[RMDB]
RNA sequence: GGGAACGACUCGAGUAGAGUCGAAAAUCUGCCCACCGGCAGUGAUGCACUAACUUUGGUAAACAUGGCCUGACGCUGUUCACUGUUUAUUCCGCUAUAGGCUUCAGUUGCGGUUACACCAGGGCUGGACGAGUAUGACCUUCGGGUCAUACUCGUCAAAAGAAACAACAACAACAAC
Reactivity to 2A3 in 0.01 (KOAc 150mM, MgCl2 10mM, bicine 150mM(pH8.5), 24C), signal-to-noise 1, nucleotides 027 to 126: u020c000u020g030c010c000c030a060c050c000g070g030c020a000g020u000g040a050u030g030c010a030c060u090a160a010c020u090u120u170g100g000u130a050a050a020c020a090u110g070g000c020c020u060g050a060c050g020c140u010g030u140u000c010a050c000u010g040u000u020u040a090u140u010c020c010g010c040u040a050u030a220g160g070c050u040u030c020a050g010u060u060g100c050g040g010u040u110a030c000a010c040c100a060g000g060g020c020u060g190
Reactivity to DMS in 0.01 (KOAc 150mM, MgCl2 10mM, bicine 150mM(pH8.5), 24C), signal-to-noise 1, nucleotides 027 to 126: u000c110u010g010c010c000c020a170c240c060g010g000c020a000g000u020g010a050u000g000c050a050c060u000a060a130c120u000u020u000g010g010u000a050a050a060c060a100u000g030g010c060c000u020g010a150c150g010c090u000g010u000u000c090a120c120u000g000u000u000u000a070u010u020c090c050g040c030u000a040u000a050g000g000c070u000u020c060a010g030u000u000g030c030g010g010u000u000a110c000a080c060c080a080g010g000g000c040u030g030

The data come from the RNA Mapping Database (RMDB), library OK2TRN. Structure probing data (2A3 and DMS) for a 177-nucleotide construct. For DMS, 993 sequencing reads were counted. The reactions ran in a buffer of 150 mM KOAc, 10 mM MgCl2 and 150 mM bicine (pH 8.5), at 24 C.